The record gives the reactivity of an RNA of 177 nucleotides to DMS and 2A3. For 2A3 the reverse transcriptase was SuperScript II with manganese. The 2A3 profile rests on 2,010 reads. It was measured as part of the RMDB library M2PK90. For DMS, 2,534 sequencing reads were counted.
[RMDB]
RNA sequence: GGGAACGACUCGAGUAGAGUCGAAAAUUAAACAUGGUUACCAAAACCUAAGGCACAAGGUAGCCAUGAAGUGCCUUAGUUAAUUAAAAGCUGAGCGUUAGGAAAAACCUAAUGCUCAGCAAAAAAAGGUGUAACAAAGAUUCGUCUUUGUUACACCAAAAGAAACAACAACAACAAC
Reactivity to DMS in 0.01 (KOAc 150mM, MgCl2 10mM, bicine 150mM(pH8.5), 24C), signal-to-noise 2, nucleotides 027 to 126: u020u020a080a170a250c060a020u000g000g010u000u000a120c030c020a090a040a140a140c130c020u010a030a050g000g000c010a040c100a110a130g000g010u000a060g040c060c070a040u000g000a060a060g010u010g000c000c020u000u000a080g020u010u010a100a060u020u010a040a120a150a090g010c000u000g000a000g010c000g030u000u000a000g000g010a140a100a070a140a170c010c000u000a000a000u000g000c000u000c000a010g000c010a010a010a020a060a020a010a010
Reactivity to 2A3 in 0.01 (KOAc 150mM, MgCl2 10mM, bicine 150mM(pH8.5), 24C), signal-to-noise 1, nucleotides 027 to 126: u070u020a050a050a010c000a020u020g020g000u040u040a020c020c000a070a060a070a130c030c050u050a090a110g040g000c010a030c010a090a050g060g000u020a010g030c000c010a010u020g010a020a010g030u020g020c000c000u050u050a080g050u050u090a070a100u080u120a100a060a040a000g000c000u000g000a000g020c000g000u000u000a010g020g000a050a130a120a150a140c010c000u000a000a000u000g000c000u000c000a000g010c010a000a000a000a000a000a000a000